[RMDB]
RNA sequence: GGGAACGACUCGAGUAGAGUCGAAAACCUCAACAGGCGCUCCAUCCCUGCCUGCUGCCGGGCGCCGUCACCUUCCCCACCCUGCACAGGCAAGCUCUGCUGGUGACGAACCCGCACGAGUUUGAGGUGCUCAGCAUGGAUUCGUCCAUGCUGAGCAAAAAGAAACAACAACAACAAC
Reactivity to DMS in 0.01 (KOAc 150mM, MgCl2 10mM, bicine 150mM(pH8.5), 24C), signal-to-noise 1, nucleotides 027 to 126: c030c000u010c110a060a130c080a070g000g000c030g020c040u000c030c220a150u000c010c070c010u000g000c020c010u000g000c160u010g020c020c090g000g000g000c070g000c020c030g000u000c050a100c080c040u010u010c000c020c000c110a230c040c000c020u000g030c030a050c050a040g020g000c010a070a050g000c010u000c010u000g000c000u000g010g020u000g000a110c110g000a160a020c010c000c040g000c010a060c140g000a050g000u000u010u000g010a060g000g010